[RMDB]
RNA sequence: GGGAACGACUCGAGUAGAGUCGAAAAGAAAUGGAGACUCAAUGGGUAUCGGAGGGCUGCUUGACUUUCACUUUGGCAGGUACGAAGCAAGGUGCAUGCUCGACCUCACUCUCCAAAAGAAAGGAAAUCUUCCUCUGCCAAAGUUUUAUGACUUUGGGUGUAUGUUCGAAUUCGUUCGAACAUACACAAAAGAAACAACAACAACAAC
Reactivity to DMS in 0.01 (KOAc 150mM, MgCl2 10mM, bicine 150mM(pH8.5), 24C), signal-to-noise 1, nucleotides 027 to 156: g020a060a060a070u010g020g000a090g010a070c100u000c060a130a160u000g030g050g040u000a070u000c060g070g030a080g000g030g020c050u000g020c040u040u000g030a130c050u010u000u010c040a100c020u000u000u000g010g000c030a030g000g020u000a110c110g010a070a060g020c040a040a050g010g070u010g010c070a150u010g000c030u000c010g000a090c010c020u000c030a070c050u020c050u010c010c070a050a020a040a190g020a070a060a100g000g000a080a040a090u000c050u000u000c000c030u000c040u010g000c010c000a010a010a040g000u000u010u000u010a100u000g000a120c000u000u000u010g010g020
Reactivity to 2A3 in 0.01 (KOAc 150mM, MgCl2 10mM, bicine 150mM(pH8.5), 24C), signal-to-noise 3, nucleotides 027 to 156: g060a010a090a010u080g020g000a030g030a010c020u030c170a050a090u080g020g000g000u080a070u110c080g040g000a030g010g050g000c030u040g040c010u040u050g030a130c020u070u100u050c090a070c040u070u040u030g010g030c020a000g020g000u080a070c130g010a040a000g010c040a030a020g040g010u070g060c040a020u120g020c010u010c020g070a050c000c000u040c010a050c020u050c010u000c010c010a050a050a000a000g050a040a040a000g050g020a030a040a070u040c000u050u010c000c000u020c020u040g020c000c000a010a010a000g000u010u020u020u120a050u040g050a050c000u010u010u030g070g060